The record gives the reactivity of an RNA of 207 nucleotides to 2A3. The RNA was probed in 150 mM KOAc, 10 mM MgCl2 and 150 mM bicine (pH 8.5) at 24 C. 2A3 is a SHAPE reagent: it acylates the 2'-hydroxyl of flexible nucleotides of all four kinds.

[RMDB]
RNA sequence: GGGAACGACUCGAGUAGAGUCGAAAAACAAACUGCGCAGCGGUAUUGACUGGGUACUGGAAAAACUCGGUGUUAUCAACAAAGAGUCAGACACACUUGACCAGACCGCCGCCAGAACUCAUGCCGCCACGUAUGGCACCGGUGGUUAUAUUCCGGCUAUGUUCUCUCUGUUCGCAGAGAGAACAUAAAAAGAAACAACAACAACAAC
Reactivity to 2A3 in 0.01 (KOAc 150mM, MgCl2 10mM, bicine 150mM(pH8.5), 24C), signal-to-noise 2, nucleotides 027 to 156: a000c040a010a050a010c040u050g000c050g020c050a050g010c000g060g010u120a110u120u220g090a100c040u100g000g000g050u080a020c020u050g000g060a050a100a070a040a030c040u030c020g020g000u040g030u080u110a190u160c110a030a080c030a100a100a050g050a080g000u060c020a000g110a060c010a010c010a030c180u090u110g050a080c030c010a030g010a040c030c020g020c000c000g030c010c000a030g020a100a040c010u050c060a030u130g040c020c000g090c040c040a150c070g130u150a110u200g010g050c000a020c030c000g000g020u040g000g140u170u080a110u000a000u100u060c020c000g010g010c000